[RMDB]
RNA sequence: GGGAACGACUCGAGUAGAGUCGAAAAUACGGUGAGCCUGUCAUUAUUCAGAGAGGCUAGAUCCUCUGUGUUGAGAAGGAUCAUGAUGGGCUCCUCGGUGUAAAAUCCGGGGCGUUCGCGCCCCGGAGUCUAAUAGAUUGUUCGCAAUCUAUUAGACAAAAGAAACAACAACAACAAC
Reactivity to DMS in 0.01 (KOAc 150mM, MgCl2 10mM, bicine 150mM(pH8.5), 24C), signal-to-noise 2, nucleotides 027 to 126: u010a060c010g010g010u000g000a010g020c010c000u010g010u000c000a000u000u000a050u000u000c030a140g000a060g000a010g000g010c100u010a090g010a110u020c010c010u000c000u010g010u010g000u000u010g000a140g000a170a140g010g010a020u000c050a000u000g000a020u000g000g000g000c010u000c000c010u010c020g000g000u000g010u000a040a060a110a210u000c000c000g020g000g020g020c000g030u000u010c200g030c000g010c000c000c000c010g010g000a010
Reactivity to 2A3 in 0.01 (KOAc 150mM, MgCl2 10mM, bicine 150mM(pH8.5), 24C), signal-to-noise 3, nucleotides 027 to 126: u280a020c010g010g000u020g000a000g000c000c010u000g010u010c000a010u000u050a010u000u020c030a020g010a000g000a000g200g000c010u020a090g030a210u140c010c010u000c010u030g130u030g130u250u270g130a120g040a290a090g050g000a010u020c000a000u020g000a010u000g000g000g020c000u000c000c010u010c000g040g000u070g030u060a110a220a020a030u040c020c010g020g000g020g020c030g040u040u070c230g000c030g000c090c110c030c010g000g000a000
This 177-nucleotide RNA was probed chemically with DMS and 2A3. The data come from the RNA Mapping Database (RMDB), library RFMREP. The DMS profile rests on 2,504 reads. For DMS the reverse transcriptase was MarathonRT. The RNA was probed in 150 mM KOAc, 10 mM MgCl2 and 150 mM bicine (pH 8.5) at 24 C. The 2A3 profile rests on 3,235 reads.